[RMDB]
RNA sequence: GGGAACGACUCGAGUAGAGUCGAAAACUACCUGUUCGUGUAUGACGGUGACUCCCCGCGAGGGCCGCUGCUUGCCAGUCUAAGUGGGAGCACCCGACCUCCGCCCAUCGAAGCUUCCUCAGGCAAGGUUAGUGGGGAUGGGGCCGUGGCAGAUACACUCGUAUCGUAAUUUCGAUUACGAUACGAGAAAAGAAACAACAACAACAAC
Reactivity to DMS in 0.01 (KOAc 150mM, MgCl2 10mM, bicine 150mM(pH8.5), 24C), signal-to-noise 2, nucleotides 027 to 156: c040u000a300c030c020u000g030u000u000c020g040u000g000u000a080u000g010a140c080g010g080u000g010a300c020u000c030c000c000c050g020c100g010a270g000g000g010c010c050g020c030u010g040c070u000u000g040c000c030a130g040u000c040u000a070a270g030u000g010g030g020a090g030c000a060c040c000c080g000a050c070c020u010c020c040g000c000c000c000a070u010c020g000a300a290g020c020u000u000c010c010u000c060a150g030g020c120a070a070g050g010u020u010a050g010u000g000g000g000g000a030u010g010g010g060g020c040c050g000u000g020g000c050a100g010a140u000a070c050a120
Reactivity to 2A3 in 0.01 (KOAc 150mM, MgCl2 10mM, bicine 150mM(pH8.5), 24C), signal-to-noise 3, nucleotides 027 to 156: c120u170a120c000c020u060g010u090u110c050g000u050g010u070a070u070g100a080c040g030g080u000g140a300c010u090c020c040c010c010g010c000g000a070g040g000g020c050c050g050c080u090g060c070u220u270g100c090c060a110g100u200c030u070a100a000g020u080g060g000g000a000g000c010a010c010c010c000g050a070c020c030u000c020c020g030c010c010c000a030u020c000g020a040a010g020c010u020u020c010c010u100c080a110g160g060c130a100a000g060g020u150u070a010g000u040g020g010g020g010a020u030g020g000g030g000c020c010g030u100g000g000c040a010g010a120u040a010c030a010
Structure probing data (DMS and 2A3) for a 207-nucleotide construct. For 2A3, 1,787 sequencing reads were counted. Source: RMDB library OK3TST, as collected in RNAgym. The RNA was probed in 150 mM KOAc, 10 mM MgCl2 and 150 mM bicine (pH 8.5) at 24 C.